[RMDB]
RNA sequence: GGGAACGACUCGAGUAGAGUCGAAAAGAGAAUGUUCAUAGGCAGCUUGGGGGUGAACCUUUUAUGGUCCAAGCAACACUGAGAAUGCGUGGUUUGACAGUCUUUGGAUCACAUCCAAUCAAUAUUAUCACCAUACGGGGUUCGCCCCGUAUGGUGAAAAAGAAACAACAACAACAAC
Reactivity to DMS in 0.01 (KOAc 150mM, MgCl2 10mM, bicine 150mM(pH8.5), 24C), signal-to-noise 2, nucleotides 027 to 126: g030a020g010a180a010u040g080u000u000c040a090u000a090g060g150c040a200g000c020u000u000g000g000g000g020g000u030g000a030a050c000c000u030u030u030u000a080u110g000g000u060c060c000a010a070g000c130a110a050c130a020c030u040g020a070g000a050a080u030g000c080g050u000g000g020u040u010u000g000a000c030a060g000u000c070u010u000u000g020g020a160u010c150a130c080a300u000c000c000a070a050u050c240a050a180u050a110u030u000a060
Reactivity to 2A3 in 0.01 (KOAc 150mM, MgCl2 10mM, bicine 150mM(pH8.5), 24C), signal-to-noise 3, nucleotides 027 to 126: g050a000g020a040a170u110g040u010u050c050a030u030a060g030g050c010a020g000c120u060u000g060g050g050g050g070u160g110a050a060c010c000u100u220u060u210a090u180g030g010u000c000c000a000a000g000c000a010a010c000a000c030u050g050a030g100a140a170u150g060c070g030u090g000g150u120u140u080g120a040c010a010g040u020c010u020u040u030g050g000a030u040c090a030c050a130u030c000c040a030a050u020c030a100a000u160a110u260u160a060